[RMDB]
RNA sequence: GGGAACGACUCGAGUAGAGUCGAAAAUUAUUUGUCGCCUAAAGCGACCAAAAGCAUCAGUACACAAUCUUUUUGGUGUUUUGGCAGAUUAUUUUAGGAGACCAUUCACCUACCGUUACUAUCAAGUGGCUGAAUUUUUGAGUUCUGAAUCCACCCAGAUCCCCCUAAUUUUCGAAUUAGGGGGAUCAAAAGAAACAACAACAACAAC
Reactivity to 2A3 in 0.01 (KOAc 150mM, MgCl2 10mM, bicine 150mM(pH8.5), 24C), signal-to-noise 1, nucleotides 027 to 156: u000u000a050u000u020u200g000u000c000g010c040c000u170a130a030a000g070c040g030a210c000c020a000a000a050a000g030c000a000u000c070a000g260u230a050c040a000c040a000a110u160c050u130u300u120u240u120g040g000u000g000u030u000u010u010g020g060c060a050g060a250u090u070a070u000u300u020u110a130g130g040a090g090a040c020c020a000u040u040c030a000c050c020u010a020c020c020g070u140u020a040c050u020a110u230c140a280a000g000u000g040g060c000u050g140a190a130u040u120u000u120u160g190a050g000u010u000c000u000g060a070a020u010c000c020a000c120c070c010a030